Structure probing data (2A3 and DMS) for a 177-nucleotide construct. The DMS profile rests on 15,154 reads.

[RMDB]
RNA sequence: GGGAACGACUCGAGUAGAGUCGAAAAUUGGGGUUAUUGGCUAGGGUCCAUUUAGCGAGGAGGACCAUCGUAAUGCUUUUGCCGCUGCCUUGGGUGUGCCAGAUGAUGCCGCCUUCUGAACGGCGCAUCUGUUCAGAAAUUUCGAUUUCUGAACAGAAAAAGAAACAACAACAACAAC
Reactivity to 2A3 in 0.01 (KOAc 150mM, MgCl2 10mM, bicine 150mM(pH8.5), 24C), signal-to-noise 5, nucleotides 027 to 126: u070u040g030g000g010g030u100u130a100u140u150g060g000c040u030a070g070g020g000u010c020c020a040u100u120u150a080g020c060g040a050g050g010a050g020g030a040c010c010a020u060c030g050u060a080a110u140g040c020u040u090u080u150g020c040c020g040c050u050g030c010c000u030u060g030g030g000u060g040u070g030c020c010a070g040a200u130g010a040u090g070c050c010g000c010c000u040u020c030u050g060a110a030c010g010g000c000g000c020a030
Reactivity to DMS in 0.01 (KOAc 150mM, MgCl2 10mM, bicine 150mM(pH8.5), 24C), signal-to-noise 7, nucleotides 027 to 126: u010u010g010g010g010g010u000u000a060u000u010g010g010c050u010a120g010g020g010u000c030c040a090u000u010u000a110g020c080g010a100g010g000a130g000g010a070c040c020a070u000c110g010u000a070a090u010g010c050u000u000u000u000g010c040c030g000c050u010g010c030c030u000u000g010g000g010u000g020u010g020c040c050a090g010a100u000g010a100u010g010c030c040g000c020c020u000u010c120u000g010a090a120c100g000g010c030g010c130a060
For 2A3, 7,423 sequencing reads were counted. It was measured as part of the RMDB library OK2TRN. 2A3 adducts were read by reverse transcription with SuperScript II with manganese. Reactivities are given for positions 27 through 126.